[RMDB]
RNA sequence: GGGAACGACUCGAGUAGAGUCGAAAAUAAUUGCAUAUUUUAAUUUUUCUGAUAAAUGGCAUUGAGCAUCGAUUUCAUUUAAAACAACUGUACACACUAUCCCUGUCAGUAAAAUUGCUCCUCCGACCAAGAGUAGAUACUUCGGUAUCUACUCUUGAAAAGAAACAACAACAACAAC
Reactivity to DMS in 0.01 (KOAc 150mM, MgCl2 10mM, bicine 150mM(pH8.5), 24C), signal-to-noise 2, nucleotides 027 to 126: u010a060a080u000u030g010c080a150u000a050u000u000u000u000a040a060u010u000u000u000u000c000u020g000a150u000a030a090a060u000g000g000c050a070u000u000g010a170g020c050a030u000c070g020a120u010u000u010c030a040u010u000u000a070a060a110a070c110a030a130c080u000g010u000a060c070a050c100a040c060u000a080u010c010c010c000u000g010u000c030a000g010u000a030a000a050a050u000u000g000c050u010c000c020u000c090c060g030a180c240
Reactivity to 2A3 in 0.01 (KOAc 150mM, MgCl2 10mM, bicine 150mM(pH8.5), 24C), signal-to-noise 2, nucleotides 027 to 126: u020a010a060u100u130g030c010a040u050a200u190u110u080u110a120a250u110u030u030u060u060c040u070g030a060u050a150a070a040u070g040g000c040a000u020u120g020a060g050c030a080u110c040g040a000u040u090u010c070a040u020u120u200a020a090a000a020c030a020a010c020u030g080u110a000c020a000c000a000c020u030a050u030c040c000c000u020g050u050c030a000g010u040a030a000a080a100u060u040g000c000u010c000c000u040c010c000g080a090c010